[RMDB]
RNA sequence: GGGAACGACUCGAGUAGAGUCGAAAAGCCACCUGGCAUACGGCUAAGGCCAAAGAUUUCAUAAUUCAUCGAAGUACAAGGCGCAUCCUGUCUGGCGUACUUUCCUAGGCCACAUCAUGAGGUGCGCUCUUGCACAUACCUUCGGGUAUGUGCAAGAAAAAGAAACAACAACAACAAC
Reactivity to DMS in 0.01 (KOAc 150mM, MgCl2 10mM, bicine 150mM(pH8.5), 24C), signal-to-noise 3, nucleotides 027 to 126: g050c030c030a120c120c050u000g000g000c060a090u000a100c140g000g000c030u010a070a120g030g020c020c030a070a100a090g020a060u000u000u000c100a130u000a060a060u000u000c070a060u000c070g010a060a050g000u010a080c110a080a030g000g000c000g000c020a020u000c000c020u000g010u000c190u010g010g020c020g020u000a090c180u000u010u020c070c080u000a180g000g010c000c000a010c080a050u010c050a020u020g020a150g020g000u000g000c000g000c010
Reactivity to 2A3 in 0.01 (KOAc 150mM, MgCl2 10mM, bicine 150mM(pH8.5), 24C), signal-to-noise 2, nucleotides 027 to 126: g000c000c000a040c030c050u030g090g050c070a010u090a140c100g040g000c030u060a080a130g100g020c030c030a010a120a040g070a040u110u140u070c040a050u140a190a110u140u040c050a060u080c130g040a070a030g090u080a050c020a090a060g060g010c010g030c000a010u030c000c000u030g020u040c020u020g010g000c030g070u040a070c000u060u090u020c000c020u020a020g040g020c050c000a010c030a040u210c020a040u090g030a030g070g000u000g000c000g000c030